[RMDB]
RNA sequence: GGGAACGACUCGAGUAGAGUCGAAAAGAUAUGGAGAAUGGCGACGAAGUAACGUAACAUCAGUCGGAAACGACUGUGGUUACAGAGCCAGACUCCUAAGUCAAAGUUGACUGUUCGCAGUCAACAACGACCCAACAUAGUUCGCUAUGUUGGGUCGAAAAGAAACAACAACAACAAC
Reactivity to 2A3 in 0.01 (KOAc 150mM, MgCl2 10mM, bicine 150mM(pH8.5), 24C), signal-to-noise 2, nucleotides 027 to 126: g010a000u020a020u090g020g000a000g010a060a060u010g010g010c070g040a210c120g200a300a010g060u150a250a060c270g020u010a000a020c020a090u090c000a000g000u000c010g020g010a030a020a000c020g000a000c000u010g000u060g050g020u010u000a010c050a070g050a010g010c030c010a010g000a040c000u000c000c020u010a030a000g020u000c070a140a090a090g000u010u000g000a000c010u000g030u050u100c300g000c120a000g000u000c010a000a000c000a010a030
Reactivity to DMS in 0.01 (KOAc 150mM, MgCl2 10mM, bicine 150mM(pH8.5), 24C), signal-to-noise 2, nucleotides 027 to 126: g010a010u010a170u010g000g010a010g000a020a220u000g000g000c020g020a220c220g020a090a130g020u010a030a120c100g000u010a030a020c040a090u010c000a000g000u000c000g000g000a060a030a090c000g010a000c000u000g020u000g010g000u000u000a010c000a170g010a150g000c000c010a010g000a290c000u000c000c000u000a000a080g000u020c040a130a090a120g000u000u000g010a010c000u000g000u020u010c200g000c010a020g010u000c010a010a010c000a050a130

The record gives the reactivity of an RNA of 177 nucleotides to 2A3 and DMS. Conditions: 150 mM KOAc, 10 mM MgCl2 and 150 mM bicine (pH 8.5), 24 C.